This 177-nucleotide RNA was probed chemically with 2A3 and DMS. The reactions ran in a buffer of 150 mM KOAc, 10 mM MgCl2 and 150 mM bicine (pH 8.5), at 24 C. For 2A3, 1,088 sequencing reads were counted. The data come from the RNA Mapping Database (RMDB), library OK1LIB. For DMS the reverse transcriptase was MarathonRT.

RNA sequence: GGGAACGACUCGAGUAGAGUCGAAAAGGUAAAUCUUUAGUUUCACCGUCCUUACCUACAAUUAAAUGAUCACAAUGUAUGGAUGCUGGGACAGAUGUUUGAUUUAGACCGGUGGUCAUGAAUUGUACCACUGACGGUAGUUCGCUACCGUCAGUGGAAAAGAAACAACAACAACAAC
Reactivity to 2A3 in 0.01 (KOAc 150mM, MgCl2 10mM, bicine 150mM(pH8.5), 24C), signal-to-noise 3, nucleotides 027 to 126: g030g000u020a000a000a080u100c020u080u180u110a030g000u000u040u030c060a030c010c010g030u010c000c000u050u140a140c000c010u000a010c000a020a010u040u140a120a140a180u070g000a050u000c000a000c040a020a190u300g040u110a150u130g180g010a090u050g000c010u060g030g070g070a020c070a050g140a060u080g120u080u110u010g090a080u010u080u060a080g030a000c000c060g100g020u020g040g000u000c000a030u030g000a000a000u000u000g070u080a020
Reactivity to DMS in 0.01 (KOAc 150mM, MgCl2 10mM, bicine 150mM(pH8.5), 24C), signal-to-noise 2, nucleotides 027 to 126: g000g010u000a030a010a080u000c010u000u010u010a160g050u000u000u010c000a040c020c000g020u030c100c000u010u010a060c080c140u060a010c060a020a000u020u020a030a080a050u010g000a040u030c070a150c050a070a130u120g040u030a030u010g000g010a030u010g000c180u040g000g080g050a040c000a090g000a080u000g000u030u000u000g000a080u000u020u040a030g020a200c150c190g020g020u000g000g000u000c000a010u000g040a040a010u000u040g000u020a000